The data come from the RNA Mapping Database (RMDB), library 15KLIB. The record gives the reactivity of an RNA of 170 nucleotides to 2A3 and DMS. The 2A3 profile rests on 7,492 reads. Values cover nucleotides 27 to 129. 2A3 adducts were read by reverse transcription with SuperScript II with manganese. DMS adducts were read by reverse transcription with MarathonRT.

[RMDB]
RNA sequence: GGGAACGACUCGAGUAGAGUCGAAAAGUUGGUGGUGUCUAUGACAACUCUAUCACAUGCCCAUUGACAGUUGCAGUAAUUGCUGGAGUUGCUGGUGCUCGCAUUCCAGACGUACCUACUACAUUGGAUCCCUGUGACUUCGGUCACAGGAAAAGAAACAACAACAACAAC
Reactivity to 2A3 in 0.01 (KOAc 150mM, MgCl2 10mM, bicine 150mM(pH8.5), 24C), signal-to-noise 6, nucleotides 027 to 129: g120u100u050g030g000u010g020g020u020g020u010c040u090a160u170g060a030c020a020a030c060u030c010u090a060u080c010a030c010a070u180g020c010c010c010a000u000u140g070a030c060a040g060u060u050g000c000a010g010u110a140a080u120u090g000c020u000g080g000a050g010u080u060g020c090u060g030g110u120g100c050u030c070g030c020a040u030u020c000c000a020g010a030c020g030u030a020c000c000u030a040c010u000a010c020a080u050u130g020g010a040u070c000
Reactivity to DMS in 0.01 (KOAc 150mM, MgCl2 10mM, bicine 150mM(pH8.5), 24C), signal-to-noise 2, nucleotides 027 to 129: g000u030u050g000g000u000g010g030u020g020u040c060u000a070u040g000a170c150a050a070c060u030c060u030a050u010c080a000c100a190u030g040c110c010c040a110u000u000g010a110c110a090g000u030u070g000c080a000g040u000a020a020u040u050g050c030u040g000g000a000g040u000u060g040c010u010g010g000u090g000c070u000c050g000c000a080u010u020c030c010a030g000a110c120g020u000a000c020c010u000a000c090u040a040c020a100u010u030g000g060a000u030c080